[RMDB]
RNA sequence: GGGAACGACUCGAGUAGAGUCGAAAAAUGAGAAGGAUAAGGCAGUGGCCCGUAAGUUAGAACGUAUGGCUGAUCAGGCUAUGACUUCUAUGUAUAAGCAAGCACGUGCUGAAGACAAGAAAGCAAACCCUAAAAAUGGGUUCGCCCAUUUUUAGGGAAAAGAAACAACAACAACAAC
Reactivity to DMS in 0.01 (KOAc 150mM, MgCl2 10mM, bicine 150mM(pH8.5), 24C), signal-to-noise 2, nucleotides 027 to 126: a090u010g030a050g000a100a040g020g000a050u000a090a150g010g020c020a060g020u010g000g020c010c030c060g000u010a090a110g000u000u000a030g000a040a030c180g010u000a020u010g010g000c000u000g000a160u010c280a070g010g000c010u000a030u000g030a030c060u000u010c010u000a040u010g010u030a030u000a100a050g000c080a060a030g010c080a020c100g000u000g010c050u000g020a090a120g010a140c110a100a140g000a070a060a150g000c080a050a050a150

The record gives the reactivity of an RNA of 177 nucleotides to DMS. The DMS profile rests on 960 reads. The data come from the RNA Mapping Database (RMDB), library 15KREP. Conditions: 150 mM KOAc, 10 mM MgCl2 and 150 mM bicine (pH 8.5), 24 C. DMS adducts were read by reverse transcription with MarathonRT.